[RMDB]
About this RNA
Source: RMDB library OK3TST, as collected in RNAgym. Structure probing data (2A3 and DMS) for a 207-nucleotide construct. For 2A3, 1,626 sequencing reads were counted. Reactivities are given for positions 27 through 156.

RNA sequence: GGGAACGACUCGAGUAGAGUCGAAAAUAGCAACAAUUUCAGACAGUUCAACUUAAUAUAGUUUUGUGUCAUAAAAGCACACACAGGGGCUCUGGAUGCUUCUCGACCAGAGAAGGACAUAAGACCUGCUGUGGGUGAGUAACCUCUCAUCAUAGAACUCUGAAUAGUAUUUCGAUACUAUUCAGAGAAAAGAAACAACAACAACAAC
Reactivity to 2A3 in 0.01 (KOAc 150mM, MgCl2 10mM, bicine 150mM(pH8.5), 24C), signal-to-noise 3, nucleotides 027 to 156: u090a010g070c020a010a070c010a080a140u040u110u130c060a070g020a040c010a030g030u040u120c040a050a010c030u060u160a180a090u190a230u140a240g030u050u020u040u130g070u030g000u020c030a020u190a090a130a030a020g040c010a000c000a000c000a000c010a060g000g040g000g000c060u020c010u010g030g170a020u010g000c020u070u030c000u020c020g260a300c060c110a060g000a000g000a000a000g010g010a000c000a010u030a020a000g020a040c000c020u110g120c020u000g020u000g000g000g020u000g000a000g020u020a040a070c000c000u000c010u010c010a020u010c000a020u040a100g100a050a020
Reactivity to DMS in 0.01 (KOAc 150mM, MgCl2 10mM, bicine 150mM(pH8.5), 24C), signal-to-noise 1, nucleotides 027 to 156: u010a110g130c050a080a080c040a130a070u010u000u000c060a150g020a080c060a080g000u000u000c000a040a080c020u000u000a130a080u010a140u020a050g000u000u000u000u020g030u000g000u010c030a200u000a000a100a070a150g010c060a010c050a070c070a030c050a060g060g010g010g000c060u000c060u000g000g030a090u000g020c000u000u020c030u010c000g000a220c300c140a230g000a030g030a070a050g010g010a080c020a070u000a140a150g000a020c010c080u000g000c000u010g030u000g000g040g030u010g000a060g010u000a130a100c110c080u020c000u000c020a000u010c130a150u010a140g000a090a260